RNA sequence: GGGAACGACUCGAGUAGAGUCGAAAAAUAGAACAUCAUCCAUCACCUCAACAGCGGCAGGAUCAUGUUCAAGUAUUGGUGCAACAUCUUCCAUUGCACCUAUUACAUCAUCGUACGUGAGUAAUGCAACUGACUUUGUUUCCGGGAUGGAGGCUAAGAGUGUCAAAAUCUUCGGAUUUUGACACUCAAAAGAAACAACAACAACAAC
Reactivity to 2A3 in 0.01 (KOAc 150mM, MgCl2 10mM, bicine 150mM(pH8.5), 24C), signal-to-noise 2, nucleotides 027 to 156: a000u190a030g120a090a000c050a140u130c020a060u010c020c000a000u010c000a180c140c030u100c060a060a060c000a040g040c070g060g010c040a040g020g000a020u020c020a000u000g060u060u020c060a030a080g020u010a020u000u030g040g000u000g000c000a010a000c020a230u150c150u300u100c130c060a040u000u000g000c000a000c000c000u000a010u010u070a000c020a060u130c040a080u110c140g060u070a060c020g030u020g030a030g030u210a060a020u000g000c030a010a000c010u030g180a080c040u100u100u080g080u070u190u040c090c050g000g000g000a000u020g000g000a010g020g000c040u070a100a000